RNA sequence: GGGAACGACUCGAGUAGAGUCGAAAAGCCAAUGGUUUCGGGAACCCCAGUACAGGCAGGCUGGGACUUCCCUCUUUAACACCAGGCCCACCCCGCUCACAGCGACGGGCCAGGCUUUCGGGAACCCCUUAUGCUCCCUGUUCGCAGGGAGCAUAAGAAAAGAAACAACAACAACAAC
Reactivity to 2A3 in 0.01 (KOAc 150mM, MgCl2 10mM, bicine 150mM(pH8.5), 24C), signal-to-noise 5, nucleotides 027 to 126: g020c000c020a010a140u100g030g010u030u060u180c070g020g000g010a010a000c000c000c000c010a010g010u130a220c030a080g030g240c060a060g040g030c020u010g020g000g010a020c030u000u000c010c100c010u040c030u010u130u080a060a030c050a000c020c000a010g000g020c000c000c000a040c010c090c000c000g000c010u120c020a180c060a070g010c000g020a010c020g000g000g000c010c000a020g000g000c000u020u020u030c060g030g010g050a040a050c000c000c000
Reactivity to DMS in 0.01 (KOAc 150mM, MgCl2 10mM, bicine 150mM(pH8.5), 24C), signal-to-noise 4, nucleotides 027 to 126: g030c000c020a190a200u000g010g000u000u020u020c230g000g000g000a010a040c120c000c010c000a020g000u000a140c050a040g020g010c090a040g000g000c000u000g010g010g030a070c280u000u010c010c000c010u000c060u020u060u040a110a110c220a060c000c000a070g020g010c000c000c010a090c090c240c050c000g000c000u010c230a150c240a200g020c010g000a020c130g030g010g010c000c010a090g000g010c030u000u030u020c060g000g010g020a060a080c010c000c010
Source information: The record gives the reactivity of an RNA of 177 nucleotides to 2A3 and DMS. It was measured as part of the RMDB libraries RFM100 and RFMREP. 2A3 adducts were read by reverse transcription with SuperScript II with manganese. The reactions ran in a buffer of 150 mM KOAc, 10 mM MgCl2 and 150 mM bicine (pH 8.5), at 24 C. Reactivities are given for positions 27 through 126.